Conditions: 150 mM KOAc, 10 mM MgCl2 and 150 mM bicine (pH 8.5), 24 C.
Structure probing data (2A3 and DMS) for a 177-nucleotide construct.
[RMDB]
RNA sequence: GGGAACGACUCGAGUAGAGUCGAAAAUCUGCCAAGCUCACUUUUAAUCAUGAGAAAGAAAUUACCCACACGGAGUCAGCAGAAAAUGAGAAAGUAGAGCUCGUGCUGUGAAUAAUUCCAGCAAGUGUUUUGGUAUAUUUUUCGAAAUAUACCAAAAAAAAGAAACAACAACAACAAC
Reactivity to 2A3 in 0.01 (KOAc 150mM, MgCl2 10mM, bicine 150mM(pH8.5), 24C), signal-to-noise 3, nucleotides 027 to 126: u000c010u020g090c020c020a010a010g000c000u010c000a010c000u020u000u000u080a120a200u070c030a050u030g100a010g110a070a120a020g070a000a220a030u170u110a110c010c010c010a050c020a010c110g020g000a030g030u020c010a010g040c000a010g090a090a070a030a000u030g000a010g070a010a020a020g000u100a100g010a000g010c000u000c040g050u040g000c000u020g040u060g030a050a050u200a200a070u240u020c010c000a000g010c020a030a090g060u060g050
Reactivity to DMS in 0.01 (KOAc 150mM, MgCl2 10mM, bicine 150mM(pH8.5), 24C), signal-to-noise 6, nucleotides 027 to 126: u010c030u010g000c050c040a140a060g010c010u000c000a050c020u000u010u000u010a080a180u000c020a030u000g010a140g010a130a100a100g000a080a080a100u030u020a130c040c010c020a100c200a080c140g000g020a110g010u000c100a070g000c080a070g000a060a060a100a020u010g000a040g000a020a020a030g010u010a090g000a020g010c020u000c090g020u020g020c010u010g000u030g010a060a260u020a070a130u010u000c010c010a040g010c060a050a100g000u030g000